[RMDB]
RNA sequence: GGGAACGACUCGAGUAGAGUCGAAAAGAUUUCAUCACAGAAUCCAACAUUUGAGGGACAAUGUUUUUAACACGAACGAACCAAGCUGGAACAGAACGGUAUAACAAUGGGGUAUCGGAUCUCCAACAUCAUGCCUGGAGUUCGCUCCAGGCAUGAUAAAAGAAACAACAACAACAAC
Reactivity to DMS in 0.01 (KOAc 150mM, MgCl2 10mM, bicine 150mM(pH8.5), 24C), signal-to-noise 1, nucleotides 027 to 126: g060a120u000u030u000c000a060u000c040a020c120a200g000a100a150u000c030c000a000a050c050a000u040u000u050g000a120g000g000g000a170c190a020a090u000g000u000u000u000u000u010a060a050c080a090c160g000a000a000c000g010a140a120c000c040a190a040g000c000u000g070g000a140a160c070a000g000a010a270c020g030g000u000a030u000a180a110c250a100a000u000g000g010g010g000u000a010u000c060g000g000a110u000c000u010c000c000a000a090c110
Reactivity to 2A3 in 0.01 (KOAc 150mM, MgCl2 10mM, bicine 150mM(pH8.5), 24C), signal-to-noise 2, nucleotides 027 to 126: g070a000u150u230u070c020a000u030c010a040c030a000g100a030a060u070c000c050a210a020c020a050u120u000u140g120a140g000g070g000a000c130a050a080u100g040u070u100u020u000u000a040a020c000a000c120g120a040a000c140g000a030a010c000c000a000a000g070c000u090g000g020a020a020c000a000g010a050a040c000g050g000u050a070u000a120a010c040a010a170u170g000g000g030g000u010a000u170c060g000g000a000u030c000u000c000c000a020a000c050
Chemical mapping of a 177-nucleotide RNA with DMS and 2A3.
Conditions: 150 mM KOAc, 10 mM MgCl2 and 150 mM bicine (pH 8.5), 24 C.
2A3 is a SHAPE reagent: it acylates the 2'-hydroxyl of flexible nucleotides of all four kinds.
The data come from the RNA Mapping Database (RMDB), library OK1LIB.
2A3 adducts were read by reverse transcription with SuperScript II with manganese.